About this RNA: Chemical mapping of a 177-nucleotide RNA with DMS and 2A3. For DMS the reverse transcriptase was MarathonRT. For 2A3 the reverse transcriptase was SuperScript II with manganese. The data come from the RNA Mapping Database (RMDB), libraries RFM100 and RFMREP.

[RMDB]
RNA sequence: GGGAACGACUCGAGUAGAGUCGAAAACAGAGUGCCUUCUAGAUCCUGGGUCAGGCGCCAAGCUCCCCAGCAUCAUGCAGGAAGCUGCAGCCCCGCAGAGUUAGGACAGCUCAUUUGGCACCCGGCGGCAUUGAUCUUGAUUCGUCAAGAUCAAUGCAAAAGAAACAACAACAACAAC
Reactivity to DMS in 0.01 (KOAc 150mM, MgCl2 10mM, bicine 150mM(pH8.5), 24C), signal-to-noise 5, nucleotides 027 to 126: c110a100g000a070g010u010g010c010c020u000u010c040u010a130g000a060u000c170c010u030g010g000g020u030c140a110g020g000c070g000c100c090a070a070g000c010u000c120c010c010c020a050g000c090a040u010c090a110u010g000c020a050g000g000a120a070g000c010u000g000c060a120g000c030c020c010c040g040c080a100g000a070g000u010u030a070g010g000a110c080a100g000c040u010c030a140u000u020u000g010g020c050a080c020c030c010g010g010c140g010
Reactivity to 2A3 in 0.01 (KOAc 150mM, MgCl2 10mM, bicine 150mM(pH8.5), 24C), signal-to-noise 7, nucleotides 027 to 126: c040a010g070a010g100u070g040c010c000u030u030c010u050a050g010a110u050c000c020u020g010g040g020u100c110a070g030g040c020g040c080c050a030a020g010c010u050c010c000c010c000a000g000c000a030u100c010a040u090g030c010a010g030g050a070a030g040c010u010g000c020a050g040c010c010c000c010g010c050a050g020a020g080u090u090a060g030g060a030c010a040g010c010u000c050a100u060u070u120g020g010c020a040c010c010c000g090g000c030g040